Source: RMDB library M2PK50, as collected in RNAgym. Structure probing data (DMS and 2A3) for a 177-nucleotide construct. The RNA was probed in 150 mM KOAc, 10 mM MgCl2 and 150 mM bicine (pH 8.5) at 24 C. DMS adducts were read by reverse transcription with MarathonRT. For 2A3 the reverse transcriptase was SuperScript II with manganese.
[RMDB]
RNA sequence: GGGAACGACUCGAGUAGAGUCGAAAAUAAGUCUAGUUCGCUAGACUUACUAUGGGGAAAACAGCCUCCCGGCUCGAUCAGGCGGAUUCCGUCCAAGCGCUGCAACACACGUAUUCGUACGUGUGAACGGCGAUAACUUAUUCGUAAGUUAUCGCCGAAAAGAAACAACAACAACAAC
Reactivity to DMS in 0.01 (KOAc 150mM, MgCl2 10mM, bicine 150mM(pH8.5), 24C), signal-to-noise 1, nucleotides 027 to 126: u000a030a020g000u000c000u000a010g000u000u010c170g020c000u000a010g000a010c000u000u000a030c080u000a100u010g000g030g030g000a080a020a100a210c140a040g000c000c010u000c010c040c000g000g000c000u020c050g010a140u010c140a060g010g020c000g000g000a250u000u000c030c020g010u000c020c090a030a050g010c080g010c010u000g020c180a110a150c000a010c000a010c000g000u000a000u000u000c220g070u000a000c000g040u000g000u000g010a030a220
Reactivity to 2A3 in 0.01 (KOAc 150mM, MgCl2 10mM, bicine 150mM(pH8.5), 24C), signal-to-noise 1, nucleotides 027 to 126: u030a020a000g000u000c000u000a010g010u020u050c150g000c110u010a000g000a000c010u010u000a000c010u060a150u110g000g040g000g000a010a130a040a110c030a010g000c010c020u010c060c020c040g040g030c020u000c000g060a090u130c090a050g000g000c020g020g060a240u220u030c010c010g000u010c030c000a080a020g020c070g020c110u040g030c010a150a080c000a010c000a000c010g000u010a000u080u140c280g030u030a010c000g000u000g010u000g060a050a020